[RMDB]
RNA sequence: GGGAACGACUCGAGUAGAGUCGAAAAGCUCUUGGUACAUCGAUGUUACUUGGUAUUUCUGGUGAAUGCCUAGGAUUGAAUCCAUAAUUUGCAUAGAAAGGUGAGUAAUUAGACGAUUCCUGGAUUGACUAGUGUCUCGUUUCGACGAGACACUAGUAAAAGAAACAACAACAACAAC
Reactivity to DMS in 0.01 (KOAc 150mM, MgCl2 10mM, bicine 150mM(pH8.5), 24C), signal-to-noise 2, nucleotides 027 to 126: g000c080u000c020u020u000g000g010u000a110c270a090u000c040g030a120u010g010u000u000a050c020u000u000g030g020u010a080u000u020u000c000u000g040g040u000g030a040a030u000g020c170c120u010a150g010g000a030u010u010g010a060a300u010c030c010a040u000a060a070u010u000u000g010c040a040u010a020g010a020a010a020g000g020u010g000a000g000u000a040a030u020u020a170g010a130c030g000a120u000u000c000c000u000g000g010a120u000u010g010
Reactivity to 2A3 in 0.01 (KOAc 150mM, MgCl2 10mM, bicine 150mM(pH8.5), 24C), signal-to-noise 2, nucleotides 027 to 126: g010c000u000c000u080u050g000g020u060a030c010a080u020c020g040a010u030g000u000u010a030c010u030u040g050g000u120a150u110u000u020c010u010g040g000u060g030a050a010u060g040c020c100u050a090g020g000a030u050u160g120a110a060u000c000c000a000u070a060a100u040u040u080g000c030a030u010a090g040a030a040a000g100g050u100g020a020g020u000a090a080u070u110a130g030a110c020g020a030u060u110c000c000u010g050g050a150u050u250g060
This 177-nucleotide RNA was probed chemically with DMS and 2A3. The RNA was probed in 150 mM KOAc, 10 mM MgCl2 and 150 mM bicine (pH 8.5) at 24 C.